[RMDB]
RNA sequence: GGGAACGACUCGAGUAGAGUCGAAAAGGCCCUUGAUCCACUCUGGAUUCAAUGCGGGCACGUUGACCUGCUGUAGCGGGAUGGUUCGUUCAUCUUGUGGAGCGAGCAGACGCGUCAUUGUCGCGCGGCAUUACCCCGCCUUCGGGCGGGGUAAUGCAAAAGAAACAACAACAACAAC
Reactivity to 2A3 in 0.01 (KOAc 150mM, MgCl2 10mM, bicine 150mM(pH8.5), 24C), signal-to-noise 1, nucleotides 027 to 126: g100g070c000c000c000u030u000g000a000u000c010c010a070c150u300c300u300g000g000a020u110u010c010a010a050u090g040c100g000g000g000c060a000c100g090u090u190g210a130c000c000u000g000c000u080g190u290a000g000c000g000g000g030a030u050g000g050u300u300c100g080u070u200c040a070u000c120u010u050g010u210g110g050a120g000c070g000a040g030c130a050g000a000c090g020c030g030u000c000a030u030u000g050u050c040g010c000g000c000g000
Notes: This 177-nucleotide RNA was probed chemically with 2A3. For 2A3 the reverse transcriptase was SuperScript II with manganese. Conditions: 150 mM KOAc, 10 mM MgCl2 and 150 mM bicine (pH 8.5), 24 C. Source: RMDB library OK1LIB, as collected in RNAgym.